[RMDB]
RNA sequence: GGGAACGACUCGAGUAGAGUCGAAAAGACGGAAAAGAUCGAACCUAAGAAGAUCAGGAAGUGUCAGCCGAAUCCUAGGGCUCCUAGAGACGCAUCGUCCGAUGCGAAAUAAACACUAACGUCGAAACCUGAUCGUGGAUUUCGAUCCACGAUCAGGAAAAGAAACAACAACAACAAC
Reactivity to DMS in 0.01 (KOAc 150mM, MgCl2 10mM, bicine 150mM(pH8.5), 24C), signal-to-noise 2, nucleotides 027 to 126: g030a100c010g010g000a080a070a060a190g140a000u000c020g010a070a100c120c070u000a120a130g000a070a200g000a000u000c020a180g000g000a090a040g040u000g050u000c070a100g000c020c150g000a140a110u050c050c090u060a030g000g000g040c110u060c100c060u000a020g050a190g000a130c020g040c000a030u000c030g000u040c300c000g000a000u000g000c000g000a000a020a100u070a200a070a050c070a000c000u000a000a240c060g000u030c000g000a040a000a040
Reactivity to 2A3 in 0.01 (KOAc 150mM, MgCl2 10mM, bicine 150mM(pH8.5), 24C), signal-to-noise 1, nucleotides 027 to 126: g030a000c020g040g000a010a010a000a090g020a000u100c120g030a000a090c000c000u060a020a000g100a050a020g000a080u010c020a030g020g160a040a040g000u000g000u010c000a010g040c060c050g030a050a100u000c010c060u120a070g000g010g010c020u020c070c000u000a000g000a000g000a000c000g000c000a030u000c040g140u020c100c120g040a020u000g020c000g080a040a040a000u120a010a010a000c000a000c030u050a150a040c000g050u050c040g040a000a000a080